[RMDB]
RNA sequence: GGGAACGACUCGAGUAGAGUCGAAAAGCAGGCCCCGAAGGAGUCUCUGCGAGGGUUUUGGAAGAAACACUCCGGUGAGCCCGGCACUCUUCUAUGGAACACUGUCUGGAAUAUGGCCGUUAUUACCCGUCCAUAGCUAUUUCGAUAGCUAUGGACGAAAAGAAACAACAACAACAAC
Reactivity to 2A3 in 0.01 (KOAc 150mM, MgCl2 10mM, bicine 150mM(pH8.5), 24C), signal-to-noise 1, nucleotides 027 to 126: g010c030a040g000g030c030c020c010c020g060a080a030g070g070a050g080u050c060u020c010u160g050c100g030a100g010g000g000u010u030u120u110g040g050a110a070g040a060a200a000c030a000c040u000c020c030g050g020u050g020a060g030c000c010c000g000g000c010a020c020u010c000u000u040c030u050a110u100g060g040a050a040c030a030c040u050g010u090c010u050g020g070a080a060u110a080u080g070g020c000c000g010u030u010a070u050u080a030c000c000
Reactivity to DMS in 0.01 (KOAc 150mM, MgCl2 10mM, bicine 150mM(pH8.5), 24C), signal-to-noise 3, nucleotides 027 to 126: g000c020a090g000g000c050c030c040c040g020a110a080g020g010a110g010u000c030u000c030u010g010c100g020a040g000g010g010u000u000u000u000g030g030a120a080g000a040a020a060c040a080c050u000c010c020g010g020u000g010a110g010c100c040c030g000g000c110a050c070u000c040u010u000c050u010a100u000g000g010a060a070c130a050c100u010g010u000c020u010g000g000a090a110u000a100u010g020g010c010c020g000u010u000a080u000u000a130c040c010
Structure probing data (2A3 and DMS) for a 177-nucleotide construct. The data come from the RNA Mapping Database (RMDB), library OK2TRN. DMS adducts were read by reverse transcription with MarathonRT. The DMS profile rests on 2,322 reads. Values cover nucleotides 27 to 126. In probing experiments dimethyl sulfate is read out at A N1 and C N3, which are open when not base-paired.